Chemical mapping of a 177-nucleotide RNA with DMS and 2A3. The data come from the RNA Mapping Database (RMDB), library OK1LIB. For DMS the reverse transcriptase was MarathonRT. For 2A3, 47,743 sequencing reads were counted. 2A3 adducts were read by reverse transcription with SuperScript II with manganese. Conditions: 150 mM KOAc, 10 mM MgCl2 and 150 mM bicine (pH 8.5), 24 C.

[RMDB]
RNA sequence: GGGAACGACUCGAGUAGAGUCGAAAAUAGAUCCAUGCUGUCCUAGUCUUUUGACUAGGCUCUUGAUGUCGAUCUGCUCCAAGACAUCUUGAGCGACAGCCGCGGAGCAGAUUUUGGAUCUAGAAAAGGGUGUCAGCAAGUUCGCUUGCUGGUACCCAAAAGAAACAACAACAACAAC
Reactivity to DMS in 0.01 (KOAc 150mM, MgCl2 10mM, bicine 150mM(pH8.5), 24C), signal-to-noise 9, nucleotides 027 to 126: u010a010g000a000u000c000c000a060u030g000c060u000g010u020c060c040u000a010g000u000c000u010u030u030u040g010a010c000u000a010g000g000c000u000c010u000u000g000a060u010g020u010c050g010a140u020c040u000g010c010u000c020c020a120a270g000a020c030a090u000c020u000u010g000a070g010c120g000a060c070a040g010c020c260g010c220g000g000a050g010c000a090g000a130u010u010u010u010g000g000a010u000c000u000a030g000a050a070a100a110
Reactivity to 2A3 in 0.01 (KOAc 150mM, MgCl2 10mM, bicine 150mM(pH8.5), 24C), signal-to-noise 9, nucleotides 027 to 126: u050a000g010a000u000c010c010a040u090g000c010u030g030u060c000c000u000a010g000u000c030u040u290u150u300g000a000c000u000a010g000g000c000u000c000u000u020g020a010u020g030u040c030g020a080u020c030u060g020c010u000c020c010a090a020g010a010c010a020u010c010u040u050g020a030g020c060g050a040c040a030g050c030c040g050c070g020g000a010g000c010a000g000a020u090u100u010u050g000g000a000u000c000u000a010g070a010a090a010a010